The record gives the reactivity of an RNA of 177 nucleotides to DMS. DMS adducts were read by reverse transcription with MarathonRT. It was measured as part of the RMDB library OK2TRN.
RNA sequence: GGGAACGACUCGAGUAGAGUCGAAAAGGGACAGAAGCUGUCUGGCCCAGGCAGGACACAGGCUGGGCGUGAACCUGACUGUAGUUGCCUCAGAACCACCUCAUGGCUGGGUGCGGUGGCUCACGCCAUGGUCUCCACGAUUCGUCGUGGAGACCAUAAAAGAAACAACAACAACAAC
Reactivity to DMS in 0.01 (KOAc 150mM, MgCl2 10mM, bicine 150mM(pH8.5), 24C), signal-to-noise 2, nucleotides 027 to 126: g000g000g020a040c030a030g010a090a150g020c120u010g010u000c020u000g010g040c060c000c020a130g000g030c020a060g010g000a070c090a100c050a030g000g020c050u000g000g000g030c040g010u010g000a080a090c050c020u000g000a100c060u000g010u000a060g010u000u010g020c030c020u000c130a090g000a100a120c040c020a050c040c060u010c060a030u000g020g010c080u000g000g000g010u000g010c100g000g000u000g000g000c070u000c020a040c090g010c020c040